[RMDB]
RNA sequence: GGGAACGACUCGAGUAGAGUCGAAAACGCGAUGGAUACGUCCAUCGCGAAUUCGUCCUAGCCGCGGACGUUAAACUGUGGCACGGUUGUGCCUAGGUGCAACCCUGCUACUAAUGGCGGUACCCCUGCCCAAGCUACCGUCUACGGACGGUAGCAACGAUCCGUACCUAUUCGUAGGUACGGAUCGAAAAGAAACAACAACAACAAC
Reactivity to 2A3 in 0.01 (KOAc 150mM, MgCl2 10mM, bicine 150mM(pH8.5), 24C), signal-to-noise 1, nucleotides 027 to 156: c010g000c000g010a000u000g000g000a010u000a090c220g070u040c000c010a000u000c010g000c000g000a000a010u100u080c010g000u010c020c020u040a070g000c000c000g010c000g000g000a020c020g010u000u030a050a020a020c140u050g000u000g000g000c000a000c000g010g020u000u000g010u020g030c020c070u100a180g100g020u000g000c010a000a000c000c000c010u020g050c020u000a000c000u000a060a200u160g130g010c020g020g000u150a140c000c000c010c020u050g030c010c010c010a030a030g010c000u000a000c000c000g010u000c000u000a040c300g070g000a000c010g000g000u000a000g000c000a000a000